The record gives the reactivity of an RNA of 177 nucleotides to DMS. The reactions ran in a buffer of 150 mM KOAc, 10 mM MgCl2 and 150 mM bicine (pH 8.5), at 24 C. It was measured as part of the RMDB library TTRINS. Values cover nucleotides 27 to 126. Values are in units of 0.01, from 0 to 300, in steps of 10. High DMS reactivity at an A or C suggests that its Watson-Crick edge is free.

[RMDB]
RNA sequence: GGGAACGACUCGAGUAGAGUCGAAAAGAUAUGGACCGAAUAAGCCGAAGAACUAUGGGUAUAGGAUAACAUAUCGGAAACGAUAUGCUAAUACUAUACCCAUAGGGAGGCUUACGGUCCUAAGUCAGAGUCGAACAUAGUUCGCUAUGUUCGACUCAAAAGAAACAACAACAACAAC
Reactivity to DMS in 0.01 (KOAc 150mM, MgCl2 10mM, bicine 150mM(pH8.5), 24C), signal-to-noise 1, nucleotides 027 to 126: g010a000u000a300u010g000g040a010c010c000g040a160a200u000a000a020g020c000c020g000a160a230g000a150a210c000u000a010u000g000g000g050u000a000u000a000g000g020a130u010a050a110c000a010u000a000u000c000g000g000a160a080a300c000g000a020u000a000u000g000c030u000a110a100u030a060c000u000a000u000a020c000c000c000a000u000a000g040g000g000a050g030g000c000u000u000a030c010g000g030u000c000c000u020a000a080g000u030c140a190